The record gives the reactivity of an RNA of 177 nucleotides to 2A3 and DMS. The DMS profile rests on 1,674 reads. For 2A3 the reverse transcriptase was SuperScript II with manganese. As a SHAPE reagent, 2A3 marks flexible, mostly unpaired nucleotides at the ribose 2'-OH. Source: RMDB library OK1LIB, as collected in RNAgym. The 2A3 profile rests on 1,102 reads.
RNA sequence: GGGAACGACUCGAGUAGAGUCGAAAACAUGCUAGUGAGGAGGGAAUGCCAAACGUAGGUCUGAUCCCUUCCAUUCAUUGUCGUCAUUCUUAGUUGAUAGAAGUGACUGAUAACCAAGCGCCUGCGCUGAGUGCGGUCAAUUCGUUGACCGCACUCAAAAAGAAACAACAACAACAAC
Reactivity to 2A3 in 0.01 (KOAc 150mM, MgCl2 10mM, bicine 150mM(pH8.5), 24C), signal-to-noise 3, nucleotides 027 to 126: c030a020u130g020c030u060a050g010u050g070a180g020g010a000g080g040g000a080a120u080g000c020c010a000a160a070c160g170u190a070g010g030u100c040u000g120a120u160c000c000c000u000u010c050c000a040u030u070c030a050u000u170g030u080c050g010u000c010a000u020u000c000u030u200a300g060u150u270g110a170u160a120g040a090a060g040u010g000a020c040u120g010a040u000a080a050c010c020a030a080g000c000g010c000c010u050g000c020g000c060
Reactivity to DMS in 0.01 (KOAc 150mM, MgCl2 10mM, bicine 150mM(pH8.5), 24C), signal-to-noise 2, nucleotides 027 to 126: c030a100u050g000c060u000a040g000u010g020a170g020g000a010g000g010g030a090a110u020g010c000c050a050a130a130c200g030u130a050g030g040u000c120u010g010a170u000c000c040c000u040u000c020c010a000u000u000c090a150u040u020g000u000c010g040u000c020a070u000u020c030u020u000a090g020u000u030g000a070u030a030g020a040a050g000u000g050a000c010u100g000a020u000a050a130c040c130a040a040g000c030g060c020c020u000g000c020g000c130

Values cover nucleotides 27 to 126.